[RMDB]
An RNA of 177 nucleotides, treated with 2A3 and read out base by base. It was measured as part of the RMDB library OK1LIB. The RNA was probed in 150 mM KOAc, 10 mM MgCl2 and 150 mM bicine (pH 8.5) at 24 C.
RNA sequence: GGGAACGACUCGAGUAGAGUCGAAAAACUCGUCGACCUGUGCUGACCGCGUCGCAACCCGGGUGCGCGGCGGCGAUGGGUGCGUUGCUGCUCGCCAACCGUGGGGGAGAGCGCGAUUCGCGAACGCUGGUUCAGCCGCUUUCGAGCGGCUGAACCAAAAAGAAACAACAACAACAAC
Reactivity to 2A3 in 0.01 (KOAc 150mM, MgCl2 10mM, bicine 150mM(pH8.5), 24C), signal-to-noise 1, nucleotides 027 to 126: a000c000u000c000g050u000c020g060a040c000c000u000g000u120g050c000u000g000a110c040c000g000c000g040u010c060g090c060a000a140c090c000c020g010g000g010u050g000c180g000c000g000g000c000g000g040c000g000a000u040g000g170g060u110g100c100g000u000u040g000c000u020g000c000u000c120g020c060c130a060a040c000c070g050u120g130g090g000g000g070a090g040a000g000c010g000c000g050a130u150u170c000g030c000g000a170a050c000g000c100